An RNA of 177 nucleotides, treated with DMS and 2A3 and read out base by base. For DMS, 4,339 sequencing reads were counted. For DMS the reverse transcriptase was MarathonRT. The RNA was probed in 150 mM KOAc, 10 mM MgCl2 and 150 mM bicine (pH 8.5) at 24 C. For 2A3 the reverse transcriptase was SuperScript II with manganese.
RNA sequence: GGGAACGACUCGAGUAGAGUCGAAAAACGAUGUCGUUCGCGACAUCGUAAAUUGUAUAACCUUGCUUGAAGUCUACUUGGUUGUAAAGCGAGAGAAGUCAGUGAGAGUCCUAUUCGUAGGACUCAAGACUAGAUUGAGGUUCGCCUCAAUCUAGUCAAAAGAAACAACAACAACAAC
Reactivity to DMS in 0.01 (KOAc 150mM, MgCl2 10mM, bicine 150mM(pH8.5), 24C), signal-to-noise 4, nucleotides 027 to 126: a010c000g000a000u000g020u010c010g010u000u010c230g030c010g020a020c000a010u000c000g030u000a010a080a060u010u010g010u000a070u000a060a250c050c000u000u010g010c000u000u000g000a100a140g000u000c010u010a100c170u000u000g000g010u000u010g000u010a050a040a020g000c010g000a030g000a050g000a070a170g010u000c040a030g000u010g000a190g000a010g000u000c000c000u000a020u000u010c180g000u000a000g000g000a000c000u000c000a020a070
Reactivity to 2A3 in 0.01 (KOAc 150mM, MgCl2 10mM, bicine 150mM(pH8.5), 24C), signal-to-noise 3, nucleotides 027 to 126: a000c000g000a000u000g000u020c000g010u030u060c180g010c030g120a000c010a000u010c000g020u000a010a030a000u100u050g080u010a070u030a130a060c000c000u010u000g010c010u030u020g030a060a010g030u000c010u030a130c140u300u240g080g030u110u010g070u060a010a030a010g010c020g010a010g000a010g000a110a010g100u080c050a010g070u000g130a130g010a000g060u010c000c000u020a040u020u060c210g030u020a010g000g000a010c000u000c000a000a000